[RMDB]
This 207-nucleotide RNA was probed chemically with 2A3. Source: RMDB library OK3TST, as collected in RNAgym.
RNA sequence: GGGAACGACUCGAGUAGAGUCGAAAAGAGUGAAGGAGGUGGGCUCCAUUUGAGACAUGUUAAUUUGAAGUUAUUUUGGAAUCUUUAGCAGGCAGUUUGCAAUACGUGUGUGAAAAUUGGAAAAAGAUUGGGUGAUAGUGAUUUAAAGUCAUUUUCCUCUCGUGGAACCAUUCGUGGUUCCACGAGAAAAAGAAACAACAACAACAAC
Reactivity to 2A3 in 0.01 (KOAc 150mM, MgCl2 10mM, bicine 150mM(pH8.5), 24C), signal-to-noise 1, nucleotides 027 to 156: g030a040g070u070g070a070a000g070g040a000g000g030u070g000g010g000c110u020c000c000a000u000u000u040g070a020g010a000c000a010u000g030u000u040a040a020u020u000u020g010a090a040g000u010u010a030u020u170u060u050g050g080a050a060u000c010u040u060u020a010g020c080a060g200g000c010a000g020u130u150u050g000c000a040a000u070a090c090g010u040g000u000g010u000g060a060a010a040a040u020u020g000g000a050a110a000a000a000g030a040u050u030g010g000g000u040g000a070u030a060g020u020g000a000u000u040u220a050a030a000g010u000c020a000u020u000u060u020c000c000